[RMDB]
RNA sequence: GGGAACGACUCGAGUAGAGUCGAAAAGACCAAUAACAGAAUGCACCACAGCGUAUAAUCAUCUGAUUGGGUGAGUUGGUCGCACCGCCAUUUGACGAACGAACGCCAAGCCUAAGCCGUCUUUGUGAACACGAGCUAGUCUUCGGACUAGCUCGAAUCUGAAGUUUAUGUUCGCAUAAACUUCAGAAAAAGAAACAACAACAACAAC
Reactivity to DMS in 0.01 (KOAc 150mM, MgCl2 10mM, bicine 150mM(pH8.5), 24C), signal-to-noise 3, nucleotides 027 to 156: g020a160c010c000a050a080u010a100a260c070a220g000a100a100u000g020c050a100c020c040a070c050a100g040c070g010u000a090u000a150a120u000c060a070u000c000u000g000a090u000u010g010g010g050u000g010a130g020u000u000g000g030u000c050g010c030a090c020c000g030c040c030a080u000u000u000g050a060c030g000a090a110c090g010a070a110c070g000c040c030a080a120g020c040c030u010a070a170g020c000c020g030u000c020u000u000u000g010u010g010a060a060c110a190c010g010a020g010c000u010a010g010u020c010u000u000c280g050g000a000c010u000a010g020c000u000c000g000a010a050
Reactivity to 2A3 in 0.01 (KOAc 150mM, MgCl2 10mM, bicine 150mM(pH8.5), 24C), signal-to-noise 5, nucleotides 027 to 156: g020a010c010c010a030a060u090a070a020c040a050g140a220a080u100g020c030a020c040c010a030c030a020g040c060g050u090a060u080a170a060u080c060a000u030c030u070g090a230u090u140g050g000g000u020g020a050g020u020u030g030g010u030c020g000c030a040c020c020g000c010c000a040u060u050u110g050a040c050g020a120a010c030g030a060a010c030g050c030c050a080a040g020c010c030u060a030a030g030c000c000g030u010c000u050u050u050g090u040g050a070a000c050a020c110g000a000g000c000u000a000g000u000c000u020u030c200g080g000a000c010u000a000g000c000u000c000g000a000a010
Source: RMDB library M2RFPK, as collected in RNAgym. An RNA of 207 nucleotides, treated with DMS and 2A3 and read out base by base. 2A3 adducts were read by reverse transcription with SuperScript II with manganese. High 2A3 reactivity points to a flexible backbone, as in loops and unpaired stretches. For 2A3, 4,325 sequencing reads were counted.